[RMDB]
RNA sequence: GGGAACGACUCGAGUAGAGUCGAAAAGAUAUGGAACCGGUAAUACGGGAGCAUGAGACUCGGAAACGAGUCCAUGCGAAGAACGUGCCAGGUUCCUAAGUCAAAGAAGCGUCUUCGGACGCUUCAACAUCUGUAGAUUGUUCGCAAUCUACAGAUGAAAAGAAACAACAACAACAAC
Reactivity to 2A3 in 0.01 (KOAc 150mM, MgCl2 10mM, bicine 150mM(pH8.5), 24C), signal-to-noise 6, nucleotides 027 to 126: g000a010u020a000u060g000g000a010a000c010c020g000g030u130a230a090u260a300c050g030g120g150a210g000c000a000u010g010a020g000a300c010u000c000g000g000a010a000a010c010g000a000g000u000c000c000a000u000g000c000g020a030a030g040a060a020c010g010u010g000c040c140a220g000g000u000u000c000c000u000a010a010g000u010c040a110a020a200g010a000a000g010c000g010u010c010u090u120c300g060g000a000c000g000c000u000u000c000a000a000
Reactivity to DMS in 0.01 (KOAc 150mM, MgCl2 10mM, bicine 150mM(pH8.5), 24C), signal-to-noise 6, nucleotides 027 to 126: g000a010u000a070u010g000g000a020a010c010c010g010g020u000a110a110u010a160c030g000g010g010a120g010c000a010u000g000a150g000a010c000u000c000g000g000a020a020a030c000g000a010g010u000c000c000a000u000g010c000g000a080a080g000a070a170c020g010u000g010c010c010a170g030g010u000u000c000c000u000a000a080g000u000c010a080a100a140g000a000a000g020c000g000u000c000u000u010c170g010g000a020c000g010c000u000u000c000a060a180